Chemical mapping of a 177-nucleotide RNA with DMS and 2A3. The DMS profile rests on 3,123 reads. DMS adducts were read by reverse transcription with MarathonRT.
RNA sequence: GGGAACGACUCGAGUAGAGUCGAAAAAGUUAUGAGUUCGCUCAUAACUACAGCGAAAGGCGCUCGGACCCGCAGUCCGCGGAAGGCAUCCCAGCCUGUCCAAGUUGGUAUAUUUCGAUAUACCAAACGCAAAUAUAAACUUCGGUUUAUAUUUGCGAAAAGAAACAACAACAACAAC
Reactivity to DMS in 0.01 (KOAc 150mM, MgCl2 10mM, bicine 150mM(pH8.5), 24C), signal-to-noise 4, nucleotides 027 to 126: a060g010u000u000a000u000g000a010g000u010u010c250g030c000u000c000a000u000a000a000c010u000a080c120a090g000c040g010a100a130a110g010g000c030g030c040u010c040g010g010a050c050c070c150g010c130a110g000u000c060c060g020c120g000g010a300a030g000g000c020a070u010c010c000c000a230g000c000c010u000g010u000c020c030a120a140g010u000u010g000g000u000a000u000a010u000u000u010c150g020a030u000a000u010a010c010c000a000a030a100
Reactivity to 2A3 in 0.01 (KOAc 150mM, MgCl2 10mM, bicine 150mM(pH8.5), 24C), signal-to-noise 2, nucleotides 027 to 126: a000g000u010u000a000u010g010a000g010u040u090c200g050c040u000c000a000u000a010a000c000u040a050c040a010g050c040g130a210a100a110g160g040c010g000c060u060c030g040g010a060c010c000c070g000c090a040g080u000c040c040g010c020g010g010a020a030g020g000c010a030u020c020c000c000a000g000c000c000u050g050u010c000c010a040a040g110u050u030g030g010u010a010u000a010u020u110u070c170g080a010u010a000u000a000c000c000a000a010a020